RNA sequence: GGGAACGACUCGAGUAGAGUCGAAAAGGUUCUUCCUCGACUCGGACCGGCUCAUCUCGGCUAGAGGCGGCAGUCCUCAGUACUCUUACUCUUUUCUGUAAAGAGGAGACUGCUGGACUCGCCGCCCGAGCCCGAGCCUGAGCCAAGUUCCGAGCGACGUCAACUGAGAGUUCGCUCUCAGUUGACGAAAAGAAACAACAACAACAAC
Reactivity to 2A3 in 0.01 (KOAc 150mM, MgCl2 10mM, bicine 150mM(pH8.5), 24C), signal-to-noise 1, nucleotides 027 to 156: g140g000u120u010c060u100u090c000c040u000c020g240a290c010u000c010g000g000a000c020c050g050g020c000u000c020a070u040c030u000c000g000g010c010u040a070g030a170g160g000c000g000g030c010a000g010u020c000c000u000c000a060g010u160a300c030u000c010u110u100a250c000u020c010u060u240u170u090c190u280g300u300a010a010a010g000a000g000g040a000g000a000c020u060g000c120u030g000g000a000c010u000c060g020c000c000g000c000c000c000g000a010g000c000c000c000g010a000g000c000c020u000g000a000g000c000c000a020a030g040u150u000c000c000g000a000g000c000g000a020